[RMDB]
RNA sequence: GGGAACGACUCGAGUAGAGUCGAAAAGACUUCAGUCAGGAUCAGCUUCAGGACUCUGACUCUAGAGCUAGUCCUCUUCUCGACUAGGACUUCCUGAAGUCCUGAGAAGUCUCCUGACUAGUCGACUAGUCAGCUAGAGGACUUCAGAGCUAGUCGAACCCCCUUAGGGGUUCGCCCCUAAGGGGGUAAAAGAAACAACAACAACAAC
Reactivity to DMS in 0.01 (KOAc 150mM, MgCl2 10mM, bicine 150mM(pH8.5), 24C), signal-to-noise 1, nucleotides 027 to 156: g010a110c010u000u000c040a050g010u000c010a070g000g000a110u000c040a090g000c090u000u000c090a130g030g000a070c150u020c010u000g000a020c030u010c000u000a050g010a120g020c030u000a110g010u000c000c040u000c050u010u040c040u000c000g020a140c020u010a060g000g000a110c030u000u000c090c080u000g020a040a050g030u000c010c000u000g000a140g020a050a150g000u000c000u000c060c020u010g010a030c010u000a050g000u000c160g000a190c030u000a000g000u000c000a040g000c020u000a110g010a100g030g000a040c000u000u010c060a080g000a120g040c010u000a020g020u000c020g030a080
Reactivity to 2A3 in 0.01 (KOAc 150mM, MgCl2 10mM, bicine 150mM(pH8.5), 24C), signal-to-noise 2, nucleotides 027 to 156: g030a020c020u040u030c060a060g040u020c020a010g070g020a090u060c100a040g060c050u110u060c050a030g000g110a040c020u030c060u150g060a100c010u000c040u100a050g000a010g040c030u030a000g040u040c020c000u020c050u160u070c040u020c010g020a010c010u020a010g010g060a070c030u080u040c020c010u000g010a000a010g020u010c000c010u030g020a050g010a040a020g020u010c010u040c000c000u010g010a020c000u010a010g060u170c090g030a070c040u010a000g010u010c000a000g010c050u100a060g020a020g070g010a010c010u060u040c070a030g000a020g040c010u010a010g010u000c010g020a050
An RNA of 207 nucleotides, treated with DMS and 2A3 and read out base by base. It was measured as part of the RMDB library OK3TST. For 2A3, 1,505 sequencing reads were counted.